[RMDB]
RNA sequence: GGGAACGACUCGAGUAGAGUCGAAAAGUUGCAAAGACUGUGGGAAAAGCACAGUAUUUGGGCAGGAGCGUACCGUUCCUCCAGGUACAGACUGUCACGGCUUCCCUUGGCUAGGAAAGGGAAAUCCGCCAAAUGUACGGUUCGCCGUACAUUUGGCAAAAGAAACAACAACAACAAC
Reactivity to DMS in 0.01 (KOAc 150mM, MgCl2 10mM, bicine 150mM(pH8.5), 24C), signal-to-noise 1, nucleotides 027 to 126: g010u040u000g010c080a020a020a050g030a040c000u000g010u000g020g020g010a080a110a130a250g020c000a000c020a000g000u000a070u000u010u000g010g000g000c040a050g010g000a180g010c140g040u000a020c060c010g000u000u000c010c000u020c020c060a140g020g000u000a000c010a140g040a300c000u000g000u000c000a200c140g000g020c300u000u000c000c000c000u010u040g020g020c060u000a120g000g000a110a010a060g040g010g010a000a050a040u030c030c160
The record gives the reactivity of an RNA of 177 nucleotides to DMS. The RNA was probed in 150 mM KOAc, 10 mM MgCl2 and 150 mM bicine (pH 8.5) at 24 C. The data come from the RNA Mapping Database (RMDB), library OK2TST.